[RMDB]
RNA sequence: GGGAACGACUCGAGUAGAGUCGAAAAGUUAGGUGAGGCUCCUAUGCAAACACAGGCCACUGCCCAAAAAUGUCCAAAGACGCCAAUGGGUAGAACAGGUAUUGUCGGAUUAAGGCUUUCCAUAAUGAAAACAAAGUAUGCUUCGGCAUACUUUGAACAGUAAAGUAAGGUUCGCCUUACUUUACUGAAAAGAAACAACAACAACAAC
Reactivity to 2A3 in 0.01 (KOAc 150mM, MgCl2 10mM, bicine 150mM(pH8.5), 24C), signal-to-noise 1, nucleotides 027 to 156: g050u060u060a040g000g040u050g040a030g020g050c020u050c040c040u090a070u140g050c030a060a120a030c020a010c020a070g080g020c010c000a020c010u010g000c000c000c030a010a030a030a000a010u020g010u030c030c030a180a080a100g010a010c030g010c010c000a020a050u020g020g000g000u040a010g000a050a040c080a060g000g030u070a110u100u090g040u040c030g010g040a030u070u130a050a030g040g000c000u040u050u010c040c010a070u100a150a130u200g150a060a050a030a040c000a000a000a000g000u000a000u000g000c000u020u070c190g090g010c010a010u000a000c000u000u000u000g000a000a000
Reactivity to DMS in 0.01 (KOAc 150mM, MgCl2 10mM, bicine 150mM(pH8.5), 24C), signal-to-noise 3, nucleotides 027 to 156: g010u000u000a080g030g000u010g010a130g010g040c020u000c020c020u010a060u000g020c070a130a070a080c050a080c070a110g000g020c010c020a130c020u010g000c000c000c000a020a040a070a070a080u000g000u000c020c030a060a120a190g010a090c040g030c030c040a040a220u000g010g010g000u000a020g020a110a120c080a080g030g020u000a040u000u000g000u000c050g000g010a140u000u000a080a110g020g000c050u000u000u000c010c030a100u010a070a100u010g000a070a060a100a140c010a020a010a010g010u000a010u000g010c010u000u010c300g050g060c000a010u000a010c000u010u000u010g000a050a120
An RNA of 207 nucleotides, treated with 2A3 and DMS and read out base by base. The 2A3 profile rests on 3,734 reads. For DMS the reverse transcriptase was MarathonRT. Conditions: 150 mM KOAc, 10 mM MgCl2 and 150 mM bicine (pH 8.5), 24 C.